[RMDB]
RNA sequence: GGGAACGACUCGAGUAGAGUCGAAAAAGCACGGUUUUUGAGGACGCAUUUUGUCCGUGCGGUAAUGCCCUCCUUUACACUUUCUCGCAUGGUUCGGGAGUGUGGAGAGGAAACAAAAGCUAGUCUCGAUAGGCGGUUAACUUCGGUUAACCGCCAACCUAGUAGAUCAGUUCGCUGAUCUACUAGGAAAAGAAACAACAACAACAAC
Reactivity to 2A3 in 0.01 (KOAc 150mM, MgCl2 10mM, bicine 150mM(pH8.5), 24C), signal-to-noise 8, nucleotides 027 to 156: a000g000c000a000c000g000g020u000u000u000u000u010g090a100g020g010a020c050g040c130a160u010u000u000u000g000u000c000c000g000u000g000c010g040g040u160a060a030u240g030c000c000c010u040c010c000u050u070u030a010c000a010c010u060u170u050c020u030c010g050c060a190u290g150g040u240u120c010g000g000g010a010g000u010g000u010g010g000a050g010a020g000g040a020a040a000c000a000a000a000a010g050c020u070a040g010u000c000u000c040g050a100u120a140g000g000c000g000g000u010u000a000a000c010u030u040c170g030g010u000u000a000a000c010c000g000c000c000a000a000
Reactivity to DMS in 0.01 (KOAc 150mM, MgCl2 10mM, bicine 150mM(pH8.5), 24C), signal-to-noise 2, nucleotides 027 to 156: a140g000c000a010c010g010g020u000u000u000u000u000g010a090g000g010a040c040g020c080a110u000u000u000u000g030u000c010c020g030u000g030c000g000g020u000a060a080u000g020c010c010c010u020c030c000u020u000u010a060c010a010c020u010u000u000c020u020c020g030c100a260u000g040g010u010u000c010g000g010g020a040g030u000g040u010g000g000a050g000a160g010g000a090a030a020c000a000a050a070a090g020c070u000a100g000u000c010u000c070g040a150u000a090g020g020c000g020g000u010u000a010a010c010u000u000c300g060g010u000u000a010a010c010c000g020c000c000a000a010